[RMDB]
RNA sequence: GGGAACGACUCGAGUAGAGUCGAAAACUCGAUACGCAAAUCGACCUCACGAUUUCGGCUCAGCACCAUUCUGGUCGAGCGCCCCGUUUCUUUAGGUGGUAUUUUAUUUGCGUCGUGGGAAGCGAUGGGGGAUCGGAGGAUUCGUCCUCCGAUCCCCAAAAGAAACAACAACAACAAC
Reactivity to 2A3 in 0.01 (KOAc 150mM, MgCl2 10mM, bicine 150mM(pH8.5), 24C), signal-to-noise 1, nucleotides 027 to 126: c050u040c000g050a010u050a120c070g040c200a060a060a060u090c000g000a050c000c070u030c000a000c140g010a060u000u080u160c120g050g000c060u100c160a050g260c050a020c050c040a070u220u040c110u190g150g060u000c000g000a000g000c040g000c000c000c000c000g020u030u000u030c040u040u050u120a090g000g000u090g000g070u130a090u000u270u000u000a090u000u140u220g090c000g000u020c040g020u000g000g050g050a000a050g000c030g080a050u000g000